[RMDB]
RNA sequence: GGGAACGACUCGAGUAGAGUCGAAAAGUAUCCCUAGAUCAUAAAACACCGCACAUGGCUCGUAAGAGCGGUUAAAUUAGCAAGUAAUGCAAAUUACGCGAGGUAACGCAUGGCCUAGGCUCGUUAGAAAAGGGAGAAUCCUUCGGGAUUCUCCCAAGGUUGUAUGAUUGUUCGCAAUCAUACAACCAAAAGAAACAACAACAACAAC
Reactivity to DMS in 0.01 (KOAc 150mM, MgCl2 10mM, bicine 150mM(pH8.5), 24C), signal-to-noise 1, nucleotides 027 to 156: g000u000a140u000c020c000c000u030a100g020a100u000c020a110u000a110a100a180a100c130a090c020c050g000c050a110c030a100u000g060g000c040u000c000g020u010a160a160g000a030g000c010g020g060u000u000a060a000a120u020u000a060g050c100a090a180g030u000a060a090u020g000c090a090a060a140u000u010a060c040g020c060g020a030g010g050u010a050a090c120g000c070a030u000g000g030c040c000u020a000g050g010c050u010c030g000u000u000a090g030a110a080a190a170g020g040g020a040g020a020a020u020c000c000u000u000c250g080g000g000a010u000u000c000u000c060c000c000a000a020
Reactivity to 2A3 in 0.01 (KOAc 150mM, MgCl2 10mM, bicine 150mM(pH8.5), 24C), signal-to-noise 2, nucleotides 027 to 156: g080u080a080u070c000c020c000u000a040g070a120u200c060a060u130a120a070a020a030c020a040c030c010g000c020a010c040a180u080g090g000c010u010c050g100u070a140a070g040a030g100c010g000g000u050u070a080a100a070u110u180a020g020c060a110a040g060u210a170a040u050g030c070a020a020a090u120u080a060c060g000c030g010a010g000g020u020a050a020c030g020c090a040u090g000g000c000c020u010a000g040g000c010u000c070g080u060u050a030g060a040a090a020a010g000g000g000a000g010a000a000u000c000c000u000u000c070g020g000g000a000u000u020c000u000c000c000c000a000a000